[RMDB]
RNA sequence: GGGAACGACUCGAGUAGAGUCGAAAAUUGCGGCGGGGCACGCGCGCGAGCGGGCGCAUGCAGAGUCGGGCUUGCGCACGCAGAAGCUGCGUGAAGAGGAGAUGCGCCGGCGCGCGGCCAGCCUCGGCCGUAUUCCCCACUUCGGUGGGGAAUACGGAAAAGAAACAACAACAACAAC
Reactivity to DMS in 0.01 (KOAc 150mM, MgCl2 10mM, bicine 150mM(pH8.5), 24C), signal-to-noise 2, nucleotides 027 to 126: u010u000g020c040g010g010c020g010g030g000g030c050a090c110g000c000g010c010g030c020g000a070g010c040g000g000g000c030g000c000a010u000g030c110a120g000a180g020u000c090g000g000g050c010u000u010g010c060g020c000a000c050g000c000a050g000a180a160g010c070u000g020c020g010u000g020a060a070g000a160g030g000a140g020a030u000g000c000g010c000c020g010g020c010g010c010g060c010g010g000c050c140a200g000c000c000u000c000g040g020
Reactivity to 2A3 in 0.01 (KOAc 150mM, MgCl2 10mM, bicine 150mM(pH8.5), 24C), signal-to-noise 1, nucleotides 027 to 126: u160u090g050c020g010g000c000g010g070g000g050c070a090c050g000c000g020c000g010c000g010a110g280c100g160g010g000c010g020c010a010u050g020c020a030g020a050g220u120c070g070g030g000c010u050u170g000c030g000c010a010c030g030c020a000g060a260a090g090c050u010g010c000g000u040g070a030a020g020a040g160g150a110g000a060u010g010c040g000c030c000g060g030c010g000c010g010c000g000g000c010c010a000g000c000c000u010c000g040g000
Notes:
The record gives the reactivity of an RNA of 177 nucleotides to DMS and 2A3. The RNA was probed in 150 mM KOAc, 10 mM MgCl2 and 150 mM bicine (pH 8.5) at 24 C. The 2A3 profile rests on 1,484 reads. For 2A3 the reverse transcriptase was SuperScript II with manganese.